Annotation
Chemical mapping of a 177-nucleotide RNA with 2A3 and DMS.
RNA sequence: GGGAACGACUCGAGUAGAGUCGAAAAGAUAUGGAAUCCGCAGGACAUGCUGCUCGGAAACGAGGCAGCAACAGCCUGAUGGAUUCCUAAGUCAAAAGUAGUGCUAAGCUUCGGCUUAGCACUACAACCUUUAUAAUUUCUUCGGAAAUUAUAAAGGAAAAGAAACAACAACAACAAC
Reactivity to 2A3 in 0.01 (KOAc 150mM, MgCl2 10mM, bicine 150mM(pH8.5), 24C), signal-to-noise 1, nucleotides 027 to 126: g000a000u050a040u120g020g010a000a020u000c010c000g040c000a000g020g000a110c060a080u080g000c010u000g010c020u020c010g010g010a000a020a010c000g010a060g200g160c000a010g080c000a000a000c030a000g160c000c000u100g070a300u130g000g000a000u010u000c000c000u000a010a000g010u020c040a000a000a030a210g000u010a010g000u010g040c010u020a010a010g000c000u020u170c300g030g000c000u020u000a010g000c030a000c010u000a000c000a000a000
Reactivity to DMS in 0.01 (KOAc 150mM, MgCl2 10mM, bicine 150mM(pH8.5), 24C), signal-to-noise 2, nucleotides 027 to 126: g000a020u000a300u000g000g000a000a010u000c000c010g000c000a010g010g020a120c090a150u000g000c000u000g020c000u000c000g010g000a100a060a120c000g000a050g000g020c000a000g010c000a000a010c250a150g000c010c000u000g000a060u020g000g000a000u000u000c000c010u000a000a040g010u000c040a070a080a120a110g000u010a000g010u000g000c020u000a010a000g000c000u000u020c200g020g000c020u000u010a010g050c030a000c000u000a010c010a070a120
Source information: For 2A3, 2,171 sequencing reads were counted. The RNA was probed in 150 mM KOAc, 10 mM MgCl2 and 150 mM bicine (pH 8.5) at 24 C. It was measured as part of the RMDB library TTRDEL.